RNA sequence: GGGAACGACUCGAGUAGAGUCGAAAAACAAUGGUGGUUGCACCAUCCAUGUCCAGAAGGUUUGGAACCACCAAUACCACACCUUUGGCACCAUCUAUGUUGCCUACCAAGAUGGCAACUACAUCACAGCUCUGCCGCAGCCCUCCACUGGUGUUGCAUUCCUAAAUCAAUUCGUUGAUUUAGGAAUAAAAGAAACAACAACAACAAC
Reactivity to DMS in 0.01 (KOAc 150mM, MgCl2 10mM, bicine 150mM(pH8.5), 24C), signal-to-noise 4, nucleotides 027 to 156: a030c060a070a110u000g020g030u000g020g030u000u000g010c060a130c080c030a020u000c020c060a080u000g000u000c100c090a100g020a070a070g010g020u000u000u010g010g020a080a080c040c030a080c050c010a130a140u000a120c010c010a060c040a050c030c000u000u000u000g020g010c050a080c040c020a110u010c060u010a070u010g010u010u000g020c000c020u020a300c120c050a040a060g020a170u010g010g020c010a030a060c010u000a060c070a070u010c040a090c020a080g000c030u000c030u000g020c000c030g020c050a090g000c010c020c000u000c040c020a060c090u010g050g000u000g010u000u000g010c010
Reactivity to 2A3 in 0.01 (KOAc 150mM, MgCl2 10mM, bicine 150mM(pH8.5), 24C), signal-to-noise 6, nucleotides 027 to 156: a010c100a070a140u090g010g010u020g020g030u040u160g080c080a050c050c000a030u010c020c020a100u120g100u090c060c040a050g080a200a090g070g010u070u110u080g030g020a040a010c010c000a020c000c020a020a010u040a020c010c010a030c010a020c040c000u000u050u060g010g000c040a020c040c010a070u050c050u110a090u150g010u000u020g020c000c000u040a080c060c060a100a040g040a140u120g000g000c010a020a030c010u040a030c010a060u130c040a020c030a100g020c010u020c010u070g020c010c030g030c020a030g040c000c020c000u050c030c010a040c050u030g010g000u030g000u010u010g000c010